[RMDB]
RNA sequence: GGGAACGACUCGAGUAGAGUCGAAAAAGAGGGAAACAGCCCAGACCGCCCGCUAAGGUCCCAAAUUCAGAGCCGAGUGGCAAAGGAUGUGCGUCCGCGCAGACAACCAGGAGGUUGGCUUAGAAGCCUUAUCAUACACUUUCGAGUGUAUGAUAAGAAAAGAAACAACAACAACAAC
Reactivity to 2A3 in 0.01 (KOAc 150mM, MgCl2 10mM, bicine 150mM(pH8.5), 24C), signal-to-noise 8, nucleotides 027 to 126: a000g120a060g020g040g010a050a130a030c020a050g050c000c000c000a010g020a020c010c020g010c020c010c010g020c050u070a050a040g040g030u040c000c000c010a030a090a040u180u100c030a020g010a020g090c010c010g050a040g080u090g010g010c020a060a010a020g040g010a040u040g020u030g040c020g070u030c090c030g020c000g000c030a010g030a100c010a030a080c010c000a010g020g020a020g000g020u050u040g030g000c020u040u050a050g040a150a010g040c000
Reactivity to DMS in 0.01 (KOAc 150mM, MgCl2 10mM, bicine 150mM(pH8.5), 24C), signal-to-noise 9, nucleotides 027 to 126: a080g000a110g000g010g000a100a080a080c100a090g010c010c010c020a090g010a110c050c050g010c030c010c020g010c060u010a070a080g010g000u000c010c010c020a050a080a070u020u010c100a090g010a220g000c030c010g010a230g020u020g010g010c050a050a120a070g000g010a070u010g010u000g010c050g010u010c080c070g010c060g010c050a030g010a080c070a060a090c030c030a070g010g010a160g010g010u000u000g010g010c030u010u010a080g000a110a110g000c120